[RMDB]
RNA sequence: GGGAACGACUCGAGUAGAGUCGAAAAGCUUAAUAACCUGCGCUGAGCCCUUCUCCCCCAGCUUGCCUGUGUCCUAGGGAAUUGGAAGGUCAUCCUUCACAGGAUCGUGUGGAAGUCCUGCUCGGGCUCCAAACAUGGUAAUUCGUUACCAUGUUAAACUUAUGUUGGGAUUCGUCCCAACAUAAGUAAAAGAAACAACAACAACAAC
Reactivity to 2A3 in 0.01 (KOAc 150mM, MgCl2 10mM, bicine 150mM(pH8.5), 24C), signal-to-noise 4, nucleotides 027 to 156: g020c010u080u120a080a030u120a200a140c040c060u080g020c060g020c110u060g030a010g010c020c010c030u080u050c100u070c020c010c000c030c000a000g000c020u030u110g010c000c000u060g010u020g010u100c010c020u030a050g000g050g080a060a090u110u070g050g010a030a010g030g020u130c040a090u090c010c000u020u050c020a020c000a050g030g010a040u040c040g050u050g000u030g150g040a040a010g020u020c000c020u010g020c020u020c010g000g000g030c000u000c020c000a010a010a000c000a000u010g000g000u020a050a040u050u020c070g040u040u000a000c000c000a000u010g000u000u020a030a020
Reactivity to DMS in 0.01 (KOAc 150mM, MgCl2 10mM, bicine 150mM(pH8.5), 24C), signal-to-noise 3, nucleotides 027 to 156: g000c060u000u000a090a110u000a080a100c010c000u010g020c040g010c070u010g020a120g010c020c010c040u000u010c040u000c030c000c020c020c050a140g050c040u000u010g020c030c020u010g010u000g010u000c030c040u000a090g010g010g010a080a130u000u010g020g010a090a030g020g030u000c070a140u010c030c010u000u020c050a070c040a060g030g000a050u010c070g010u000g050u000g020g010a080a080g010u010c030c010u000g000c070u000c090g040g000g020c010u000c000c030a070a040a020c010a010u010g000g010u000a010a090u000u010c300g020u000u000a000c000c000a010u000g010u000u000a020a060